[RMDB]
RNA sequence: GGGAACGACUCGAGUAGAGUCGAAAAAUAAAUGACUUUGUAUUGGAAUAAUUGUCAUUACAGUAUUCAGCUUGCAACGUGUUACUGAAUUACUGAAGAAUUAGGUGCUUAUGACCGCACGUUGUGAUCCAUGCACUCAUUUCGAUGAGUGCAUGGAAAAAGAAACAACAACAACAAC
Reactivity to DMS in 0.01 (KOAc 150mM, MgCl2 10mM, bicine 150mM(pH8.5), 24C), signal-to-noise 1, nucleotides 027 to 126: a150u010a050a000a040u020g000a040c010u010u010u000g020u020a190u010u000g000g020a100a300u010a030a020u000u010g010u010c030a020u000u000a260c020a020g010u010a030u000u000c000a000g000c300u000u030g000c030a010a010c000g040u000g010u010u020a110c010u000g010a030a010u010u000a000c030u030g010a090a070g000a060a020u000u000a100g020g020u020g040c130u010u040a230u000g010a050c000c000g000c020a010c010g010u000u000g000u010g000a090
Reactivity to 2A3 in 0.01 (KOAc 150mM, MgCl2 10mM, bicine 150mM(pH8.5), 24C), signal-to-noise 2, nucleotides 027 to 126: a010u120a010a010a050u000g020a020c000u020u050u120g080u100a110u040u230g130g060a160a060u190a130a030u040u040g000u020c000a000u000u060a020c000a010g030u010a030u010u050c020a030g060c060u090u110g040c060a000a000c010g010u040g010u020u040a050c010u030g040a000a010u110u040a060c020u070g120a090a030g070a080a090u180u160a090g000g020u110g100c000u280u200a150u300g050a020c000c000g000c010a000c000g000u000u000g000u000g000a010

Structure probing data (DMS and 2A3) for a 177-nucleotide construct. For DMS, 887 sequencing reads were counted. The reactions ran in a buffer of 150 mM KOAc, 10 mM MgCl2 and 150 mM bicine (pH 8.5), at 24 C. DMS adducts were read by reverse transcription with MarathonRT. Values are in units of 0.01, from 0 to 300, in steps of 10. Reactivities are given for positions 27 through 126.